[RMDB]
This 177-nucleotide RNA was probed chemically with DMS and 2A3.
For 2A3, 7,013 sequencing reads were counted.
As a SHAPE reagent, 2A3 marks flexible, mostly unpaired nucleotides at the ribose 2'-OH.
The RNA was probed in 150 mM KOAc, 10 mM MgCl2 and 150 mM bicine (pH 8.5) at 24 C.
For DMS, 3,406 sequencing reads were counted.
It was measured as part of the RMDB library M2PK50.

RNA sequence: GGGAACGACUCGAGUAGAGUCGAAAAGCUUUCGCGUUCGCGCGAAAGCAAAGAUACGUAGUCGUUGGUCACUAAUUACGGACAAUGGCAUAAUUAAAAUAAAAACAGAUAUGUUCGCAUAUCUGAACGUGUAUUAAAGGUUCGCCUUUAAUACACGAAAAGAAACAACAACAACAAC
Reactivity to DMS in 0.01 (KOAc 150mM, MgCl2 10mM, bicine 150mM(pH8.5), 24C), signal-to-noise 4, nucleotides 027 to 126: g000c000u000u000u000c000g040c000g010u000u010c190g030c000g010c010g000a020a000a000g020c000a010a030a100g000a170u010a060c220g010u010a110g020u000c010g050u000u000g000g000u010c020a090c140u010a120a070u000u010a140c210g010g010a020c010a020a040u000g000g000c010a090u010a060a120u000u010a040a040a090a130u010a070a050a060a120a200c010a020g000a020u000a000u000g000u010u020c140g010c000a010u010a010u000c000u000g000a040a090
Reactivity to 2A3 in 0.01 (KOAc 150mM, MgCl2 10mM, bicine 150mM(pH8.5), 24C), signal-to-noise 6, nucleotides 027 to 126: g000c000u000u000u000c010g000c030g040u010u100c260g020c000g000c000g080a000a000a000g000c000a000a000a000g020a010u250a070c150g090u110a050g020u030c010g010u010u030g090g070u040c020a030c140u080a150a230u230u140a080c110g030g020a010c010a020a020u020g020g000c020a040u110a140a090u250u180a060a060a060a090u240a040a090a020a020a020c010a000g010a000u010a000u010g020u040u050c190g000c080a010u010a000u000c000u000g010a020a020